RNA sequence: GGGAACGACUCGAGUAGAGUCGAAAAGCAAAAUUUGUUUGUUCAAAAAAUAGGGACGCAAAUCGAUGGGCGCGCUGCCAAAGACAGGGUUGUCUAUAUCAAAGCCGUACAAUUGGCUGUCUUCGUCGUAGUCGGAAGCAUUUUUAAUUUUGUCGUCGCCAGAGACAAUAUUCGUAUUGUCUCUGGCAAAAGAAACAACAACAACAAC
Reactivity to DMS in 0.01 (KOAc 150mM, MgCl2 10mM, bicine 150mM(pH8.5), 24C), signal-to-noise 1, nucleotides 027 to 156: g010c040a010a080a060a090u020u010u000g000u000u000u000g040u010u040c020a010a060a090a080a150a150u000a140g070g000g010a040c040g000c030a030a030a060u000c050g060a150u000g030g010g000c020g040c300g040c020u010g000c010c020a080a050a180g010a090c130a060g020g010g020u000u010g010u000c000u000a110u000a090u000c050a050a120a020g030c020c040g000u000a050c080a050a100u000u010g010g030c040u010g000u010c030u000u010c050g010u000c060g050u010a090g000u000c010g010g010a120a200g000c050a020u000u070u020u020u020a020a140u000u010u000u000g000u000c040g000u000c160
Reactivity to 2A3 in 0.01 (KOAc 150mM, MgCl2 10mM, bicine 150mM(pH8.5), 24C), signal-to-noise 2, nucleotides 027 to 156: g000c010a040a040a110a070u020u050u080g030u120u100u100g050u010u110c070a040a000a000a020a070a090u150a140g090g000g000a030c020g010c050a040a040a040u060c040g030a050u030g010g000g030c010g000c030g010c040u030g020c020c040a070a040a000g020a020c030a020g040g000g000u060u020g010u030c080u010a150u040a070u230c050a070a030a000g070c010c010g060u070a010c060a060a130u040u040g100g000c010u020g020u030c040u010u140c000g050u000c030g020u010a050g040u030c010g000g050a020a020g000c020a010u030u030u040u070u130a140a140u020u120u050u090g070u070c050g070u080c070